[RMDB]
RNA sequence: GGGAACGACUCGAGUAGAGUCGAAAAGCUAGUCGGAGACGACUAGCAACGAUCAGUUCGCUGAUCGGAACGUGCAUUCAACUACGCUAGAAGCACGAAUAGGCGACGCUUAGCGUAUAACUGAGAAAGCAGAUAACAAAAAUAAAAAGGCGUCGCGGAUCACCGGAGUAUUCGUACUCCGGUGAUCAAAAGAAACAACAACAACAAC
Reactivity to 2A3 in 0.01 (KOAc 150mM, MgCl2 10mM, bicine 150mM(pH8.5), 24C), signal-to-noise 1, nucleotides 027 to 156: g000c000u000a000g000u000c000g000g010a040g020a020c000g000a010c000u000a000g010c000a020a000c000g010a000u000c000a000g040u150u090c160g050c080u000g010a000u000c030g040g050a070a020c000g030u060g000c030a300u060u000c000a010a030c080u070a010c030g000c020u010a020g000a030a000g010c000a000c010g000a010a030u260a170g100g000c010g000a000c000g010c010u000u030a000g000c010g010u010a010u070a110a130c050u050g000a010g150a120a070a000g120c030a010g080a030u180a090a210c120a040a090a060a060a010u210a060a110a020a060a000g000g000c000g010u000c000g020c000g000
An RNA of 207 nucleotides, treated with 2A3 and read out base by base. Conditions: 150 mM KOAc, 10 mM MgCl2 and 150 mM bicine (pH 8.5), 24 C.